[RMDB]
RNA sequence: GGGAACGACUCGAGUAGAGUCGAAAAAAAAAGGAGGAUGAGAAAUAUAGAGAGAGAUCGGUCCUCCCACGCGCGUCUCUCUCUGAUAAGUGGGAUAAGAGGAUGAUUAAUAGAUAGCGCGCAAAAAGUAAUGUGAAAGAUUCGUCUUUCACAUUACAAAAGAAACAACAACAACAAC
Reactivity to 2A3 in 0.01 (KOAc 150mM, MgCl2 10mM, bicine 150mM(pH8.5), 24C), signal-to-noise 2, nucleotides 027 to 126: a000a000a020a020a000g010g010a000g020g000a030u040g010a040g060a150a210a000u200a040u110a120g000a000g000a000g000a000g000a010u070c050g040g000u010c000c000u020c020c020c000a010c030g070c000g000c000g020u020c010u020c000u000c000u000c000u000g000a010u020a130a060g050u100g010g010g010a030u040a100a070g040a030g080g010a040u040g030a050u080u220a090a100u020a070g080a060u050a040g030c000g000c010g010c040a030a070a020a030a010
Reactivity to DMS in 0.01 (KOAc 150mM, MgCl2 10mM, bicine 150mM(pH8.5), 24C), signal-to-noise 4, nucleotides 027 to 126: a020a030a070a080a080g010g010a020g010g010a030u000g010a160g000a100a080a070u000a090u000a040g000a030g010a040g010a020g000a020u000c090g000g000u010c030c040u000c010c010c030a050c070g010c030g020c040g010u000c000u010c010u000c000u000c000u000g010a060u010a030a060g020u020g010g000g020a070u010a060a030g000a060g000g000a080u000g010a100u000u000a060a070u000a100g010a070u010a030g020c010g020c020g040c190a040a060a060a070a080
Source: RMDB library M2PK90, as collected in RNAgym. Chemical mapping of a 177-nucleotide RNA with 2A3 and DMS. Conditions: 150 mM KOAc, 10 mM MgCl2 and 150 mM bicine (pH 8.5), 24 C.